[RMDB]
RNA sequence: GGGAACGACUCGAGUAGAGUCGAAAACAGCGAUCCAGCAUGAUCUGCGCGGCCGGCGCGUGCGCAGAGGCCGAGUGCGCGUACCGAUCACGGCCAUCAGAGUACGUACUAGUACUCUGCGGCCGAGCGGGUAAUCAGUAUUCGUACUGAUUACCCGAAAAGAAACAACAACAACAAC
Reactivity to 2A3 in 0.01 (KOAc 150mM, MgCl2 10mM, bicine 150mM(pH8.5), 24C), signal-to-noise 7, nucleotides 027 to 126: c050a020g060c020g060a050u050c040c010a010g030c040a110u120g010a030u010c010u040g000c010g000c010g030g030c010c000g050g000c080g030c050g090u130g030c130g000c040a040g050a100g130g000c020c010g100a150g080u150g120c010g000c010g010u020a050c040c080g000a020u050c040a020c070g000g000c010c000a100u160c010a030g000a000g010u000a000c030g010u030a180c070u050a080g000u000a000c000u010c010u010g000c020g010g000c000c010g000a010g020
Reactivity to DMS in 0.01 (KOAc 150mM, MgCl2 10mM, bicine 150mM(pH8.5), 24C), signal-to-noise 9, nucleotides 027 to 126: c130a120g020c050g020a080u000c020c050a130g020c070a150u010g000a050u000c020u000g010c020g020c010g010g010c010c030g010g020c050g010c050g020u010g020c050g020c040a080g010a120g010g000c020c020g000a110g010u000g020c020g010c020g010u000a090c110c080g000a060u010c050a210c030g010g010c000c010a070u010c020a000g000a020g010u000a000c000g010u010a110c270u010a120g010u000a000c000u000c000u000g020c300g010g010c000c000g010a050g000
Annotation:
The record gives the reactivity of an RNA of 177 nucleotides to 2A3 and DMS. It was measured as part of the RMDB library OK2TRN. The reactions ran in a buffer of 150 mM KOAc, 10 mM MgCl2 and 150 mM bicine (pH 8.5), at 24 C.